[RMDB]
RNA sequence: GGGAACGACUCGAGUAGAGUCGAAAAAGAAACCACGGAAACGAGCCUCCCUGGCAAGGUAAAUGGAACGGUCCCUCCGAGCAAAGGCACCAAAAGCUGAGAUGACCUCAGCAAGGGUAAAAAAAAAGUUGAAUAAAUGAUUCGUCAUUUAUUCAACAAAAGAAACAACAACAACAAC
Reactivity to 2A3 in 0.01 (KOAc 150mM, MgCl2 10mM, bicine 150mM(pH8.5), 24C), signal-to-noise 1, nucleotides 027 to 126: a000g110a070a010a020c000c030a000c040g040g000a110a060a010c020g000a030g030c020c010u010c030c010c000u050g020g000c060a040a040g060g010u040a030a090a090u120g000g030a020a090c020g000g020u050c020c000c000u010c000c020g000a000g000c030a060a020a110g040g000c030a050c030c000a030a130a000a020g010c010u030g000a020g000a090u160g130a080c000c010u010c000a000g010c010a010a010g050g010g000u120a080a040a020a030a000a000a020a020a020
Reactivity to DMS in 0.01 (KOAc 150mM, MgCl2 10mM, bicine 150mM(pH8.5), 24C), signal-to-noise 2, nucleotides 027 to 126: a190g030a130a080a140c030c020a060c130g040g000a060a100a100c090g010a090g010c020c030u000c030c040c030u010g010g000c050a080a060g000g010u010a030a080a120u010g000g000a040a070c080g000g010u000c060c000c020u000c000c000g000a080g020c140a030a050a070g010g020c120a070c030c010a060a090a110a110g000c010u000g000a040g000a270u010g000a150c190c000u000c010a020g030c000a010a090g010g010g010u000a000a000a000a000a110a080a110a140a120